Structure probing data (2A3 and DMS) for a 177-nucleotide construct. The RNA was probed in 150 mM KOAc, 10 mM MgCl2 and 150 mM bicine (pH 8.5) at 24 C. The DMS profile rests on 2,463 reads. Values cover nucleotides 27 to 126. The 2A3 profile rests on 581 reads.
[RMDB]
RNA sequence: GGGAACGACUCGAGUAGAGUCGAAAAAAAAUAUAAGUAUGCCACUGGUAUAUACAAAUAUGAAUACGAUAGAACGAAAGAAUAAAGUUAUGACUGUGCUCAGUGCUGUAGGCCUAGAUGGCAAAGGAUGCAAGCAGUUAUUCGUAACUGCUUGCAUAAAAGAAACAACAACAACAAC
Reactivity to 2A3 in 0.01 (KOAc 150mM, MgCl2 10mM, bicine 150mM(pH8.5), 24C), signal-to-noise 1, nucleotides 027 to 126: a000a000a000a000u170a000u050a190a000g040u060a010u090g000c000c000a100c000u070g140g000u000a210u160a000u000a080c160a000a160a020u160a000u040g130a000a000u300a110c020g080a070u130a140g070a000a000c060g080a260a030a000g070a160a040u060a200a150a000g110u110u160a070u160g020a000c010u030g070u080g020c000u000c160a050g000u000g030c070u090g020u100a020g110g000c000c000u050a040g000a080u080g000g000c000a300a000a000g130g030
Reactivity to DMS in 0.01 (KOAc 150mM, MgCl2 10mM, bicine 150mM(pH8.5), 24C), signal-to-noise 2, nucleotides 027 to 126: a120a060a130a080u060a100u020a070a120g000u020a050u010g000c000c000a050c040u000g020g060u000a030u050a070u000a030c050a020a040a090u010a130u030g000a030a020u000a050c020g030a130u040a040g010a030a010c070g000a050a110a000g030a180a160u050a020a060a060g000u010u010a040u020g020a000c050u030g000u000g000c000u000c020a060g000u010g000c250u000g000u000a020g010g000c030c010u050a070g030a080u000g010g030c000a030a060a230g030g000